Conditions: 150 mM KOAc, 10 mM MgCl2 and 150 mM bicine (pH 8.5), 24 C. An RNA of 177 nucleotides, treated with 2A3 and read out base by base. The 2A3 profile rests on 776 reads.

[RMDB]
RNA sequence: GGGAACGACUCGAGUAGAGUCGAAAAGGCUGCACACGUCCUACAAUGGAACAUACAGACGGCCGCGAACCCGCGAGGGUAAGCUAAUCCGAAAAAGUGUUCCUUAGUUCGGAUUGCAGGCUGCAACAGAGCCUUGGCAUUUCGAUGCCAAGGCUCUAAAAGAAACAACAACAACAAC
Reactivity to 2A3 in 0.01 (KOAc 150mM, MgCl2 10mM, bicine 150mM(pH8.5), 24C), signal-to-noise 1, nucleotides 027 to 126: g020g000c000u010g020c020a030c000a020c080g030u000c000c000u000a010c030a000a160u180g000g000a010a010c010a000u090a010c020a030g110a050c020g020g000c000c000g000c000g000a030a120c000c000c000g000c030g030a090g010g000g010u020a000a000g010c000u020a130a020u010c000c000g130a130a060a000a000a000g040u020g000u040u010c000c000u000u020a040g030u090u080c050g000g000a030u040u060g010c000a030g030g030c020u020g020c040a040a050c030